[RMDB]
RNA sequence: GGGAACGACUCGAGUAGAGUCGAAAAGGCCCAAUGCUGUCGCGAAGAGUUCGGCUCUGUCAGCCCGGCUGGGUCCGGGUGGGGGCCGGCACAGAGGGACACACCGGGCCGGGGCGCCGAGGAUAGCUAGACGUAAUAAUUUCGAUUAUUACGUCUAAAAAGAAACAACAACAACAAC
Reactivity to DMS in 0.01 (KOAc 150mM, MgCl2 10mM, bicine 150mM(pH8.5), 24C), signal-to-noise 9, nucleotides 027 to 126: g030g010c000c000c000a100a140u030g010c120u000g020u010c010g000c010g010a300a190g000a060g040u010u040c020g010g010c000u000c010u000g010u040c160a200g000c010c000c000g000g000c010u040g030g020g020u040c000c000g010g000g030u000g000g000g010g000g010c010c000g010g000c000a070c020a020g010a300g000g000g010a020c010a030c030a080c130c150g000g000g010c010c010g010g000g010g000c070g010c020c010g000a080g000g000a060u020a060g010c140
Reactivity to 2A3 in 0.01 (KOAc 150mM, MgCl2 10mM, bicine 150mM(pH8.5), 24C), signal-to-noise 9, nucleotides 027 to 126: g030g000c000c000c000a010a030u140g040c140u010g010u010c040g030c020g300a060a040g040a020g040u190u300c010g010g010c010u000c000u030g250u140c050a080g050c000c000c000g040g000c050u300g230g080g050u100c000c000g000g000g000u050g020g000g000g010g000c000c000g000g000c000a010c000a000g070a040g020g030g000a000c000a000c000a010c020c060g000g010g000c020c000g000g000g000g010c050g010c010c020g020a040g040g020a080u070a100g030c040

Structure probing data (DMS and 2A3) for a 177-nucleotide construct. The data come from the RNA Mapping Database (RMDB), libraries RFM100 and RFMREP. 2A3 adducts were read by reverse transcription with SuperScript II with manganese. High 2A3 reactivity points to a flexible backbone, as in loops and unpaired stretches.